The record gives the reactivity of an RNA of 207 nucleotides to 2A3 and DMS.

[RMDB]
RNA sequence: GGGAACGACUCGAGUAGAGUCGAAAACAGGCGCAGACCCGCGCUGGUUGCGAUUCGUAGGUUACGUCUACGUUAAAACGUUAAACAGUUUAAAUUAACUGCAAACGAAAACUCAUACGCUGUAGCUGCUUAGUUCAGCCCAGCUGCCAAUAGACUGCUAAUAUAGAUUGUUCGCAAUCUAUAUUAGAAAAGAAACAACAACAACAAC
Reactivity to 2A3 in 0.01 (KOAc 150mM, MgCl2 10mM, bicine 150mM(pH8.5), 24C), signal-to-noise 6, nucleotides 027 to 156: c020a030g050g000c000g000c030a030g040a230c000c020c030g040c030g010c090u020g050g010u120u090g080c060g030a100u060u140c010g010u020a020g020g040u080u040a030c040g010u020c010u000a000c000g000u000u010a000a080a010a000c000g000u020u000a070a160a000c010a010g010u020u030u100a240a300a250u130u090a030a020c010u020g050c080a130a040a000c080g100a050a050a040a060c070u100c090a080u100a160c090g000c010u010g020u050a030g000c010u020g000c010u130u140a050g030u210u130c010a000g000c000c030c000a010g000c010u050g030c020c010a050a040u040a040g060a060c030u080g000
Reactivity to DMS in 0.01 (KOAc 150mM, MgCl2 10mM, bicine 150mM(pH8.5), 24C), signal-to-noise 4, nucleotides 027 to 156: c030a090g030g010c010g040c050a120g010a170c070c040c040g030c030g010c030u010g030g020u010u000g000c030g000a170u000u000c010g020u000a040g010g020u000u000a040c040g010u000c010u000a030c030g010u000u000a060a050a100a130c020g010u010u000a070a220a080c020a020g020u010u000u010a070a130a220u000u000a000a030c000u000g010c020a240a090a090c030g010a110a070a070a110c080u000c050a150u000a070c090g010c010u010g020u000a060g040c010u000g000c050u010u010a100g010u020u010c020a060g010c000c040c010a050g010c010u000g060c050c050a070a110u000a070g000a070c070u010g010
Conditions: 150 mM KOAc, 10 mM MgCl2 and 150 mM bicine (pH 8.5), 24 C.